The record gives the reactivity of an RNA of 207 nucleotides to 2A3 and DMS. For 2A3 the reverse transcriptase was SuperScript II with manganese. The reactions ran in a buffer of 150 mM KOAc, 10 mM MgCl2 and 150 mM bicine (pH 8.5), at 24 C. It was measured as part of the RMDB library OK3TST. Values cover nucleotides 27 to 156.

[RMDB]
RNA sequence: GGGAACGACUCGAGUAGAGUCGAAAAAAUGCUUCACCGUAGCCAGUAGCUUCUUUCCGAGUGGUGAGUGUGGGUUCAAGCAUGUUUGUCGUCCGUCCUUCAGUGUUAGAAUAAUCUCUCUAUGAUCGCAACCACUAGUCGGUGAUGUAAUAGUUACACCUGAACCUUAGUUCGCUAAGGUUCAGGUAAAAGAAACAACAACAACAAC
Reactivity to 2A3 in 0.01 (KOAc 150mM, MgCl2 10mM, bicine 150mM(pH8.5), 24C), signal-to-noise 1, nucleotides 027 to 156: a060a000u120g010c000u020u100c050a030c040c030g080u030a000g010c010c090a050g030u040a020g030c000u000u000c030u040u270u120c190c080g000a020g030u110g040g050u110g060a130g000u190g030u030g030g030g040u060u050c030a030a030g000c100a110u000g110u040u100u030g040u010c030g040u020c050c080g000u000c030c000u060u100c030a010g000u000g050u150u170a050g070a060a050u190a250a140u080c030u000c010u050c090u110a000u210g110a070u100c050g000c000a040a080c010c020a050c050u090a070g020u090c190g000g000u020g010a070u070g030u050a000a130u120a280g080u000u130a030c010
Reactivity to DMS in 0.01 (KOAc 150mM, MgCl2 10mM, bicine 150mM(pH8.5), 24C), signal-to-noise 2, nucleotides 027 to 156: a090a050u000g020c050u000u000c050a080c060c060g070u010a170g050c000c000a120g020u020a150g010c020u000u000c070u000u000u000c050c010g000a120g000u000g010g040u010g010a090g040u020g000u010g010g020g020u010u010c040a060a120g050c040a100u000g020u000u000u000g030u000c030g040u000c010c030g000u000c020c010u000u000c020a080g030u000g010u000u010a110g030a070a050u000a070a100u000c030u010c040u000c000u010a100u000g010a080u000c040g010c060a080a170c020c000a040c050u000a120g050u010c040g000g030u000g020a100u010g000u010a070a130u000a120g010u000u000a100c120